[RMDB]
RNA sequence: GGGAACGACUCGAGUAGAGUCGAAAAGACCGCUGAAUGCGGAAGUACUAGAUCAACUAGAAAGUAGAUCAAUACAAAAGCUACGUCUCGAAACUAGUUGAUCUAGUACAGUCGAGACGUAGGAAGACACUAGUAUCCACUUCGGUGGAUACUAGUGAAAAGAAACAACAACAACAAC
Reactivity to 2A3 in 0.01 (KOAc 150mM, MgCl2 10mM, bicine 150mM(pH8.5), 24C), signal-to-noise 7, nucleotides 027 to 126: g040a020c000c010g000c030u110g220a280a140u300g010c000g000g030a030a020g010u010a010c000u010a000g000a010u000c000a000a000c000u010a020g070a300a200a020g060u080a010g040a060u100c050a070a040u240a110c100a010a120a020a010g060c040u020a020c030g050u020c040u040c090g060a070a080a050c010u000a010g000u000u000g000a000u000c000u000a000g000u000a000c010a000g000u010c010g010a010g000a040c080g030u050a050g040g070a070a040g060a020
Reactivity to DMS in 0.01 (KOAc 150mM, MgCl2 10mM, bicine 150mM(pH8.5), 24C), signal-to-noise 5, nucleotides 027 to 126: g020a200c020c010g010c040u010g020a160a090u050g000c000g010g000a080a070g000u010a080c010u000a020g000a000u000c000a000a010c010u000a040g010a100a110a110g000u010a020g010a040u010c090a100a120u060a120c210a110a090a070a100g010c060u010a040c150g000u010c130u010c070g010a070a070a130c000u000a000g000u000u010g000a000u000c010u000a000g000u030a000c090a070g010u000c060g020a060g000a070c050g020u000a040g010g000a120a080g010a210
The data come from the RNA Mapping Database (RMDB), library OK1LIB. Structure probing data (2A3 and DMS) for a 177-nucleotide construct. The RNA was probed in 150 mM KOAc, 10 mM MgCl2 and 150 mM bicine (pH 8.5) at 24 C.